[RMDB]
Chemical mapping of a 207-nucleotide RNA with DMS and 2A3. Conditions: 150 mM KOAc, 10 mM MgCl2 and 150 mM bicine (pH 8.5), 24 C.
RNA sequence: GGGAACGACUCGAGUAGAGUCGAAAAUAUACAAACUUCUAACUUUCAUGAAUGUAAAUAUUCCACAGUCAACUAUUGAGCUUGUAGUUGACUUAAUUAUGCUUUUGUUUGGUGCUGAUUUCAAGAAUUAUACCACUGUACAGGCAUCUUCAAAGGAGAUACCCUCAUUAUUCGUAAUGAGGGUAUCAAAAGAAACAACAACAACAAC
Reactivity to DMS in 0.01 (KOAc 150mM, MgCl2 10mM, bicine 150mM(pH8.5), 24C), signal-to-noise 3, nucleotides 027 to 156: u010a180u000a160c040a070a110a180c020u000u010c050u010a120a160c070u000u010u010c070a080u010g010a160a100u000g000u010a070a050a170u010a140u000u000c020c030a240c270a040g010u000c000a010a030c000u000a030u000u030g000a130g040c120u010u010g010u000a010g020u010u000g010a020c010u000u010a020a050u000u020a060u000g020c100u000u000u000u000g030u000u000u010g010g030u010g010c000u000g030a160u000u010u010c010a060a100g000a090a150u000u000a090u000a050c060c030a080c050u000g020u000a110c100a130g000g020c010a040u000c090u000u000c080a030a070a120g010g020a250
Reactivity to 2A3 in 0.01 (KOAc 150mM, MgCl2 10mM, bicine 150mM(pH8.5), 24C), signal-to-noise 7, nucleotides 027 to 156: u150a000u030a040c050a090a200a050c050u090u080c040u140a110a200c120u140u280u270c140a120u170g090a110a030u100g030u130a040a100a040u130a100u100u070c040c030a060c020a060g000u000c000a000a010c000u010a010u060u170g090a080g120c110u120u100g020u010a000g000u000u000g010a000c000u000u020a000a000u040u060a070u140g050c010u040u030u030u030g110u060u040u060g030g020u010g000c010u020g060a280u070u040u120c060a090a050g030a080a030u210u080a090u100a150c040c050a060c080u030g010u060a020c010a050g030g020c000a010u030c000u060u040c020a030a040a030g080g040a080